[RMDB]
RNA sequence: GGGAACGACUCGAGUAGAGUCGAAAACGGACUCACCAGCUUCCGUGCCGCCAUGCACUCUUCCGUGCAUGUGCAUGUACGCGAUGACUGCCGAACGGAUACAGAGAUUAAGGGCCGCUGGGACUAACCUACAGCUGAACUUCGGUUCAGCUGUAGGAAAAGAAACAACAACAACAAC
Reactivity to DMS in 0.01 (KOAc 150mM, MgCl2 10mM, bicine 150mM(pH8.5), 24C), signal-to-noise 2, nucleotides 027 to 126: c040g000g000a050c070u010c020a100c210c030a070g000c040u000u000c030c000g020u010g010c020c300g040c020c000a000u000g000c020a000c010u000c180u000u000c190c250g000u000g000c000a000u000g010u010g000c010a040u000g010u000a050c140g010c090g010a070u000g000a070c090u000g000c000c030g010a140a040c080g030g010a090u020a090c150a050g000a140g010a130u000u000a030a160g000g030g030c020c040g010c020u000g000g010g000a130c080u010a030a200
Reactivity to 2A3 in 0.01 (KOAc 150mM, MgCl2 10mM, bicine 150mM(pH8.5), 24C), signal-to-noise 2, nucleotides 027 to 126: c040g010g010a000c030u020c120a090c030c010a010g020c020u030u010c000c000g000u000g000c000c010g000c010c010a010u000g000c000a010c010u110c100u300u090c040c060g050u030g000c010a020u000g050u040g020c010a010u160g000u020a010c060g010c120g000a030u080g080a140c010u050g030c060c010g070a090a010c050g040g000a010u070a220c040a080g060a000g020a100u130u170a150a040g070g000g010c000c060g070c060u000g090g030g020a040c030u040a030a080
An RNA of 177 nucleotides, treated with DMS and 2A3 and read out base by base. It was measured as part of the RMDB library OK2TRN. For DMS, 1,466 sequencing reads were counted. The RNA was probed in 150 mM KOAc, 10 mM MgCl2 and 150 mM bicine (pH 8.5) at 24 C.